[RMDB]
RNA sequence: GGGAACGACUCGAGUAGAGUCGAAAAAGUUUGAGAAACACUACUCUAAUGAUCUCCUGGUAUGCAGAAGCAGGGAGAAUUUCAGAGGCAAGAUCCUUAAUAGAACCACGGCUUUUCUCAUUUCAGGAAACCACUUGGUUAAGGUGUAUGACUAUCACAGUAUUUAAUGGUUCGCCAUUAAAUACUGAAAAGAAACAACAACAACAAC
Reactivity to 2A3 in 0.01 (KOAc 150mM, MgCl2 10mM, bicine 150mM(pH8.5), 24C), signal-to-noise 4, nucleotides 027 to 156: a010g050u080u090u060g100a090g040a020a090a000c030a010c030u120a020c010u000c000u040a090a090u100g060a110u040c000u000c000c000u050g030g050u180a140u140g010c080a070g030a300a070g030c030a040g030g000g000a040g020a030a010u020u090u080c070a010g000a010g020g000c060a080a020g020a110u090c010c000u090u060a130a060u070a230g070a060a010c010c000a000c090g120g000c070u070u060u110u010c040u010c030a160u120u190u140c070a030g050g000a020a020a020c020c010a060c090u080u150g030g000u080u050a040a040g020g000u000g000u000a070u100g090a060c030u080a080u160c050a020
Reactivity to DMS in 0.01 (KOAc 150mM, MgCl2 10mM, bicine 150mM(pH8.5), 24C), signal-to-noise 3, nucleotides 027 to 156: a120g000u010u010u010g020a180g000a220a040a090c080a070c030u010a070c030u000c010u000a050a080u010g020a120u000c000u000c000c010u000g020g020u000a100u000g040c150a110g030a150a140g010c020a140g020g010g020a060g000a040a060u000u010u000c070a030g020a080g020g010c060a070a090g000a130u000c010c000u000u010a070a100u000a090g040a080a100c020c020a020c130g020g030c040u010u020u000u000c010u010c040a120u000u000u000c070a050g010g010a040a020a040c010c020a070c070u010u010g040g000u000u000a020a050g010g040u010g020u000a050u010g000a100c030u000a140u000c070a190
This 207-nucleotide RNA was probed chemically with 2A3 and DMS. It was measured as part of the RMDB library OK3TST. 2A3 is a SHAPE reagent: it acylates the 2'-hydroxyl of flexible nucleotides of all four kinds. The RNA was probed in 150 mM KOAc, 10 mM MgCl2 and 150 mM bicine (pH 8.5) at 24 C.